[RMDB]
RNA sequence: GGGAACGACUCGAGUAGAGUCGAAAACACUGAGACCGCUCGUAGAAGACGAGUUCGAUAGACUUGGGGUGUACGCGUCGAGGCAACGAGACGUUUAGCCCGCGAGUACUAACAGGUCAAUGCCACAAAGGGAGAAAUCAUUCGUGAUUUCUCCCUUAAAAGAAACAACAACAACAAC
Reactivity to 2A3 in 0.01 (KOAc 150mM, MgCl2 10mM, bicine 150mM(pH8.5), 24C), signal-to-noise 3, nucleotides 027 to 126: c160a020c040u030g030a000g000a090c010c010g030c010u000c000g030u070a090g050a300a010g130a100c000g000a010g010u040u080c020g060a170u040a030g020a000c000u000u000g000g000g000g000u110g050u110a050c080g000c020g000u030c000g020a040g040g000c010a050a020c050g020a010g010a010c000g020u000u000u050a010g000c000c000c000g160c030g000a010g000u050a300c010u040a070a080c010a020g000g000u000c020a020a060u080g070c010c020a080c050a080
Reactivity to DMS in 0.01 (KOAc 150mM, MgCl2 10mM, bicine 150mM(pH8.5), 24C), signal-to-noise 5, nucleotides 027 to 126: c150a230c080u010g010a300g000a020c010c000g000c010u000c000g000u000a150g000a130a090g000a060c010g010a010g000u010u010c090g000a150u000a020g010a070c000u000u000g010g000g000g000u010g000u000a060c300g000c000g000u000c000g000a300g030g000c290a080a130c030g010a300g030a000c030g020u000u000u030a150g010c030c010c000g020c000g000a000g000u010a070c030u010a040a060c080a120g010g000u010c000a040a150u020g000c040c020a110c210a070
Conditions: 150 mM KOAc, 10 mM MgCl2 and 150 mM bicine (pH 8.5), 24 C.
An RNA of 177 nucleotides, treated with 2A3 and DMS and read out base by base.
For 2A3 the reverse transcriptase was SuperScript II with manganese.